[RMDB]
RNA sequence: GGGAACGACUCGAGUAGAGUCGAAAACGGCGCGCCCGGCAACCUGGUCAUCAAUGCUACCGGUAAUCGCGUGACGGGCACCGCGGAAGCAGGCAGUACAGUGACGAUUACCUCUGAGACUGGUGUGGACCGUACUGGAUUUCGAUCCAGUACGGUCAAAAGAAACAACAACAACAAC
Reactivity to 2A3 in 0.01 (KOAc 150mM, MgCl2 10mM, bicine 150mM(pH8.5), 24C), signal-to-noise 3, nucleotides 027 to 126: c000g010g020c030g000c020g020c000c000c020g000g030c000a010a030c010c020u040g010g000u020c020a060u030c020a180a050u170g060c010u060a050c030c020g000g020u070a030a050u060c030g010c030g030u060g040a030c040g000g010g080c060a070c020c030g040c020g000g070a060a030g060c010a070g050g010c000a000g040u030a060c020a060g040u030g190a040c010g000a020u050u060a050c000c020u070c090u040g010a020g000a070c010u000g100g000u030g020u060g090
Reactivity to DMS in 0.01 (KOAc 150mM, MgCl2 10mM, bicine 150mM(pH8.5), 24C), signal-to-noise 2, nucleotides 027 to 126: c080g010g000c030g000c090g000c010c010c070g000g000c080a080a100c020c010u000g000g000u000c060a080u020c040a020a080u020g010c120u000a060c070c080g010g000u000a010a080u000c010g030c130g000u030g000a100c060g040g000g080c060a240c020c030g030c120g010g030a100a130g010c040a030g030g050c080a060g010u020a120c000a080g010u030g000a120c030g000a050u000u010a090c020c020u020c020u000g000a060g000a080c000u000g040g020u030g000u000g000
Source information: The record gives the reactivity of an RNA of 177 nucleotides to 2A3 and DMS. The RNA was probed in 150 mM KOAc, 10 mM MgCl2 and 150 mM bicine (pH 8.5) at 24 C. For 2A3 the reverse transcriptase was SuperScript II with manganese. For DMS the reverse transcriptase was MarathonRT. Source: RMDB library OK1LIB, as collected in RNAgym.